[RMDB]
RNA sequence: GGGAACGACUCGAGUAGAGUCGAAAAGACGUGAUCCGAGGGUGUGGGUCUCACCAGAUCGGUCUCACUAGACUUGGGUUGUGCUCAUUGGUUCGCAUGUCAGCCCAACCGAUCCGCUGGCCGCAGCAUGAUGGAUGCCAUUCGUGGCAUCCAUCAUAAAAGAAACAACAACAACAAC
Reactivity to DMS in 0.01 (KOAc 150mM, MgCl2 10mM, bicine 150mM(pH8.5), 24C), signal-to-noise 2, nucleotides 027 to 126: g000a110c060g010u000g010a090u010c010c050g000a070g000g010g010u000g020u010g020g010g010u000c060u020c070a050c030c020a120g020a090u000c020g000g020u010c090u010c090a070c080u000a080g010a050c070u000u010g010g000g000u020u000g000u000g010c000u000c030a110u000u010g010g010u010u000c050g010c060a030u000g000u010c000a080g000c030c030c030a060a070c060c020g010a110u000c040c090g020c050u000g020g010c010c140g010c090a030g010c090
Reactivity to 2A3 in 0.01 (KOAc 150mM, MgCl2 10mM, bicine 150mM(pH8.5), 24C), signal-to-noise 1, nucleotides 027 to 126: g050a000c020g030u030g030a030u000c010c000g000a070g020g000g000u000g000u050g010g070g100u090c030u060c030a030c030c000a000g050a140u030c040g020g000u050c050u000c090a020c040u120a070g090a080c010u040u020g070g000g000u070u040g080u100g050c020u040c000a120u040u060g150g000u220u150c010g000c110a060u050g030u020c040a010g030c000c000c000a020a030c010c000g030a080u000c030c040g010c010u030g000g060c030c040g030c020a020g110c000
Chemical mapping of a 177-nucleotide RNA with DMS and 2A3. The DMS profile rests on 1,520 reads. Source: RMDB library OK2TRN, as collected in RNAgym.